RNA sequence: GGGAACGACUCGAGUAGAGUCGAAAAAAGCGUUCGCGCUUUGCGGGCCGUAGGGUGACGACGAUCGGUUGCAAGAAGACUUAUGUAUUCGAAAGAGUACAAUCUUUGAUGACCAACCGGGAGUCACCCUAAACGGAGGAUGUGGCUUCGGCCACAACCUAAACUUCCUGUUCGCAGGAAGUUUAGGAAAAGAAACAACAACAACAAC
Reactivity to 2A3 in 0.01 (KOAc 150mM, MgCl2 10mM, bicine 150mM(pH8.5), 24C), signal-to-noise 5, nucleotides 027 to 156: a000a000g050c050g010u070u120c180g000c020g040c150u060u030u110g110c110g040g090g030c010c010g030u030a030g000g000g010u010g010a000c030g020a030c010g000a010u030c000g000g020u000u010g000c030a140a200g030a010a000g000a010c020u180u200a100u240g010u000a000u010u020c010g070a110a040a050g010a030g000u000a000c020a070a120u000c010u000u050u060g120a230u110g020a050c060c020a000a010c000c000g000g000g000a000g000u000c000a000c000c000c010u000a010a020a000c020g000g020a050g070g060a110u120g010u000g020g000c010u040u040c240g120g000c000c000a000c000a000a010
Reactivity to DMS in 0.01 (KOAc 150mM, MgCl2 10mM, bicine 150mM(pH8.5), 24C), signal-to-noise 3, nucleotides 027 to 156: a040a010g020c020g050u000u010c220g040c060g020c050u000u000u010g020c060g010g030g010c010c010g010u000a050g010g010g050u000g010a020c010g020a200c110g000a060u000c000g010g020u000u000g000c050a120a300g000a030a010g020a040c080u000u000a190u010g030u000a010u010u020c010g000a280a100a300g000a040g000u030a000c000a020a070u000c010u000u000u000g000a210u000g000a100c200c010a000a010c010c000g040g000g010a200g000u010c010a020c000c000c000u000a000a030a050c030g000g000a120g000g000a100u000g020u000g000g020c010u010u010c230g050g010c000c000a010c000a010a030